[RMDB]
RNA sequence: GGGAACGACUCGAGUAGAGUCGAAAAAGUAAUCCACGAUCGCUACACGGCAUUAAGCAAUGGAAGUGACCCUUGAGGGAAGCAAUUCUGCAGAGACACUUCCACCCUGGGGUGGCGUCAUCGGAUUACACCGUCGCGUUACAGGGAACCUGGCUGUCUUCAUUCAUUACUUCGGUAAUGAAUGAAGAAAAGAAACAACAACAACAAC
Reactivity to 2A3 in 0.01 (KOAc 150mM, MgCl2 10mM, bicine 150mM(pH8.5), 24C), signal-to-noise 3, nucleotides 027 to 156: a000g010u000a000a000u020c020c000a010c060g010a040u190c100g010c000u010a000c020a030c000g070g000c050a140u280u250a060a050g020c050a050a080u070g010g050a020a010g000u020g040a110c060c010c010u010u030g070a130g000g030g030a010a020g030c050a050a170u050u030c010u100g030c070a010g000a010g030a100c010a000c000u000u000c000c000a040c010c000c020u060g020g000g120g000u000g000g000c000g010u010c010a030u130c060g010g010a010u010u010a010c030a000c030c020g100u130c030g000c030g080u070u090a080c030a040g010g020g060a020a020c010c030u050g050g000c020u050g040u030